[RMDB]
RNA sequence: GGGAACGACUCGAGUAGAGUCGAAAAGGCUGGGUCGUUUUCGUCGACCACCCGGUCGCGGGUGUCCCCGUAGUAGCCCACCGCGCUGGCGUUGAUCAAGGUGGGCACGCCGGCGUCGGCGACGGCGUACCACCGUGGGGUUCGCCCCACGGUGGUAAAAAGAAACAACAACAACAAC
Reactivity to 2A3 in 0.01 (KOAc 150mM, MgCl2 10mM, bicine 150mM(pH8.5), 24C), signal-to-noise 4, nucleotides 027 to 126: g030g000c030u040g000g020g000u010c040g000u000u010u010u040c010g000u000c000g010a020c000c010a020c020c020c000g040g090u300c170g040c040g150g010g000u070g070u150c010c020c000c010g040u130a110g030u060a040g080c010c000c000a000c000c000g020c000g020c090u030g050g010c070g140u130u160g040a160u130c090a110a040g000g010u050g010g000g000c000a000c000g000c000c000g020g000c020g000u030c030g010g010c010g000a000c000g020g000c010g010
Reactivity to DMS in 0.01 (KOAc 150mM, MgCl2 10mM, bicine 150mM(pH8.5), 24C), signal-to-noise 2, nucleotides 027 to 126: g030g010c000u000g030g010g040u010c030g000u010u020u040u000c020g000u020c040g020a040c010c050a050c040c010c040g000g000u060c200g010c000g000g010g010u000g000u000c090c050c000c060g020u010a080g000u020a120g000c000c000c020a060c000c020g000c260g030c090u000g000g000c060g010u020u020g000a140u020c040a100a230g020g000u000g000g010g000c030a000c010g000c010c010g000g000c010g000u000c020g010g010c020g000a040c030g010g000c010g000
An RNA of 177 nucleotides, treated with 2A3 and DMS and read out base by base. It was measured as part of the RMDB library OK1LIB. 2A3 adducts were read by reverse transcription with SuperScript II with manganese.